[RMDB]
RNA sequence: GGGAACGACUCGAGUAGAGUCGAAAAGGAAUUGUCCGGCGUCCAGAUGAAAAACCAAGAGCCGGAAGAUGCUCUGGUGCUCUUCGUCGAAGACGUGAACGCGGCCGUCGAUGGAAGCACCGAUGGCGACAUAGUAGGCUUUCGAGCCUACUAUGUCAAAAGAAACAACAACAACAAC
Reactivity to 2A3 in 0.01 (KOAc 150mM, MgCl2 10mM, bicine 150mM(pH8.5), 24C), signal-to-noise 2, nucleotides 027 to 126: g000g000a040a020u070u070g020u030c010c000g010g010c010g010u000c020c010a010g010a050u120g060a070a090a000a050a030c020c010a070a020g060a020g150c040c000g130g000a020a000g050a040u170g000c020u030c090u240g010g000u010g000c000u060c070u070u000c010g000u000c010g000a020a020g030a040c000g020u030g060a040a020c210g000c020g060g030c100c010g020u000c000g000a020u030g030g000a030a000g020c010a000c010c020g010a040u100g000g020c060
Reactivity to DMS in 0.01 (KOAc 150mM, MgCl2 10mM, bicine 150mM(pH8.5), 24C), signal-to-noise 3, nucleotides 027 to 126: g010g010a050a030u000u010g030u000c000c000g010g000c000g000u000c010c000a060g010a160u010g000a050a060a050a100a180c010c000a090a080g010a160g020c000c010g010g010a020a030g000a150u010g010c030u010c250u010g020g010u000g010c010u000c190u000u010c010g010u000c010g010a070a080g000a020c010g000u000g010a090a100c300g010c030g010g010c100c010g010u000c000g000a020u000g010g000a060a020g000c000a010c000c000g010a040u000g010g010c080

An RNA of 177 nucleotides, treated with 2A3 and DMS and read out base by base. Conditions: 150 mM KOAc, 10 mM MgCl2 and 150 mM bicine (pH 8.5), 24 C. It was measured as part of the RMDB library OK2TST. For 2A3, 2,710 sequencing reads were counted.